[RMDB]
RNA sequence: GGGAACGACUCGAGUAGAGUCGAAAAUACUUUAUAAAGGAGGGAGCCAAUGCAGCGCUUAAAGUUGAUUUAACACCACACAAUCCGUUGAAAGCAUGCGAUCGCAUUAAUACAAUUGCAGGAUUUCCGGACUACAGUAUUUCGAUACUGUAGUCCGAAAAGAAACAACAACAACAAC
Reactivity to DMS in 0.01 (KOAc 150mM, MgCl2 10mM, bicine 150mM(pH8.5), 24C), signal-to-noise 1, nucleotides 027 to 126: u000a100c030u000u010u000a130u050a180a120a180g020g040a130g000g010g020a100g030c000c030a080a040u020g010c070a110g010c110g030c050u000u000a010a020a010g000u000u010g000a120u010u030u000a110a050c040a050c030c020a030c060a070c090a140a050u000c050c050g000u000u000g000a080a090a070g010c230a040u010g020c110g010a040u000c090g000c050a080u000u010a070a080u000a070c020a070a080u000u000g020c060a080g000g000a150u000u000u000c050